Chemical mapping of a 177-nucleotide RNA with DMS and 2A3. Conditions: 150 mM KOAc, 10 mM MgCl2 and 150 mM bicine (pH 8.5), 24 C. The data come from the RNA Mapping Database (RMDB), library RFMREP. DMS adducts were read by reverse transcription with MarathonRT.

[RMDB]
RNA sequence: GGGAACGACUCGAGUAGAGUCGAAAAGUUGCUUCCUACUGGUGAACUCUCCCUUGUAAUUAGUGGGAGAAAUUCAUGUUUCCGAAGCAUAAAUUAAUUGAUGUAAUUACCAGUAUUAAACAGCACGGAUGUACAAAAUCUUCGGAUUUUGUACAUCAAAAGAAACAACAACAACAAC
Reactivity to DMS in 0.01 (KOAc 150mM, MgCl2 10mM, bicine 150mM(pH8.5), 24C), signal-to-noise 2, nucleotides 027 to 126: g000u000u000g000c060u010u010c050c090u000a030c020u000g000g010u010g020a030a060c110u000c000u000c010c000c000u020u000g020u010a110a140u020u000a100g010u000g010g020g010a010g000a000a020a080u000u000c010a050u000g000u000u010u010c090c070g000a110a110g010c030a010u010a030a040a050u010u010a020a070u020u010g020a070u010g000u000a050a050u000u000a010c010c000a010g000u000a040u010u010a070a060a180c100a030g000c060a050c250g010
Reactivity to 2A3 in 0.01 (KOAc 150mM, MgCl2 10mM, bicine 150mM(pH8.5), 24C), signal-to-noise 3, nucleotides 027 to 126: g020u010u020g000c000u030u040c040c000u010a010c010u000g020g000u030g050a070a050c020u000c000u020c020c000c000u000u070g130u110a240a180u200u160a150g100u120g040g000g000a000g000a020a000a000u030u030c030a000u030g030u010u050u020c110c070g120a050a010g000c010a020u080a030a100a030u090u120a040a100u110u180g110a050u100g060u080a070a080u040u030a020c000c000a010g010u000a010u040u080a070a070a020c030a000g000c030a000c080g100